RNA sequence: GGGAACGACUCGAGUAGAGUCGAAAAAUUCUGCUUUCGAGCAGAAUGGACGACCUUUGUGUUUAUUAGAGGGAGAAGAUGGGUACCCAUUGGGUACCCUACCUUCGAGGAUCUAUUCUAAACACUCUGGUGUAGACUAUCUCGUUCGCGAGAUAAAAAUCUAAUUAGGUUUCGACCUAAUUAGAUUAAAAGAAACAACAACAACAAC
Reactivity to 2A3 in 0.01 (KOAc 150mM, MgCl2 10mM, bicine 150mM(pH8.5), 24C), signal-to-noise 5, nucleotides 027 to 156: a000u010u010c000u010g010c010u090u070u140c270g090a010g010c000a000g020a000a000u020g010g040a020c070g050a020c000c000u020u010u010g020u000g000u000u010u000a040u010u010a010g020a010g020g030g010a040g000a010a010g010a000u020g010g000g040u000a010c030c070c240a300u160u300g020g010g000u000a000c000c010c000u010a030c000c000u000u000c010g030a150g010g010a010u000c000u010a040u060u040c020u040a000a000a000c000a000c000u000c010u000g000g030u050g090u120a060g030a060c030u020a020u000c000u000c000g040u070u050c300g010c020g090a010g010a020u130a060a120a040
Reactivity to DMS in 0.01 (KOAc 150mM, MgCl2 10mM, bicine 150mM(pH8.5), 24C), signal-to-noise 3, nucleotides 027 to 156: a050u000u010c000u010g000c010u000u000u010c180g020a050g020c000a020g000a010a010u000g020g020a150c050g010a070c010c010u000u000u000g020u000g020u000u000u000a020u010u000a020g000a070g000g000g020a300g010a020a010g010a040u000g000g000g040u000a020c010c010c010a300u000u000g080g030g040u000a010c000c000c000u000a010c020c000u000u000c020g000a300g020g000a090u010c020u010a040u000u000c120u000a020a030a050c000a010c000u000c050u000g010g020u000g010u000a070g010a160c110u000a040u000c010u000c010g030u000u000c300g030c020g000a040g010a030u000a010a080a110